[RMDB]
RNA sequence: GGGAACGACUCGAGUAGAGUCGAAAAACACCAGGCGGUGCAUACGUGCACCGCCUGGUGAAUAGCAGCGGGAACAGUACUGCAGUGGGCAAUCGGUGUUCUGGAGUAUUGUUUCUGCUGCCCGGAAGUCUCUAUAGGGAUUCGUCCCUAUAGAGACAAAAGAAACAACAACAACAAC
Reactivity to 2A3 in 0.01 (KOAc 150mM, MgCl2 10mM, bicine 150mM(pH8.5), 24C), signal-to-noise 2, nucleotides 027 to 126: a000c030a020c010c000a030g020g030c030g000g000u020g000c050a010u060a060c300g140u080g000c010a000c000c000g010c000c000u020g020g010u000g020a000a000u030a020g020c000a000g000c010g000g000g000a000a000c000a030g010u030a000c010u060g130c000a020g050u150g040g120g000c070a090a160u230c230g180g080u170g140u070u050c020u010g060g110a000g000u010a000u000u000g000u000u000u000c010u000g000c000u000g000c010c000c000g080g100a080a040